[RMDB]
RNA sequence: GGGAACGACUCGAGUAGAGUCGAAAAGCAGUAUACUGCCACUUGUGUGAGAAUACUUUUAGUACAAGCGAGUACACGCAGUAUACUGCCACUUGUGUGAGAAUACUUUUAGUACAAGCGAGUACACUAAGGAGCAUCCAUUCGUGGAUGCUCCUUAAAAAGAAACAACAACAACAAC
Reactivity to 2A3 in 0.01 (KOAc 150mM, MgCl2 10mM, bicine 150mM(pH8.5), 24C), signal-to-noise 1, nucleotides 027 to 126: g000c000a000g000u000a010u000a010c000u000g000c000c060a010c000u000u000g040u000g000u050g130a110g150a110a000u070a120c000u070u160u240u180a050g000u010a010c000a010a000g020c000g030a050g060u120a030c060a000c080g030c030a000g000u000a000u000a040c000u000g000c000c000a040c000u110u120g030u000g000u030g050a040g090a100a100u140a160c030u000u100u010u100a010g020u010a020c000a000a050g040c020g070a020g000u000a010c080a000c020
Reactivity to DMS in 0.01 (KOAc 150mM, MgCl2 10mM, bicine 150mM(pH8.5), 24C), signal-to-noise 2, nucleotides 027 to 126: g000c000a000g030u000a010u000a010c030u000g000c000c100a010c080u000u000g000u030g010u000g010a120g000a170a100u000a060c060u010u110u000u050a210g060u080a010c000a160a300g000c040g010a190g010u000a080c120a280c300g000c000a000g000u000a000u010a030c020u040g000c000c000a020c050u010u010g080u010g000u020g020a090g040a140a100u020a080c060u000u040u000u000a010g000u000a030c000a030a080g010c100g000a120g000u000a050c000a090c260
Chemical mapping of a 177-nucleotide RNA with 2A3 and DMS. The reactions ran in a buffer of 150 mM KOAc, 10 mM MgCl2 and 150 mM bicine (pH 8.5), at 24 C. Source: RMDB library OK1LIB, as collected in RNAgym. 2A3 is a SHAPE reagent: it acylates the 2'-hydroxyl of flexible nucleotides of all four kinds. For 2A3, 595 sequencing reads were counted. 2A3 adducts were read by reverse transcription with SuperScript II with manganese.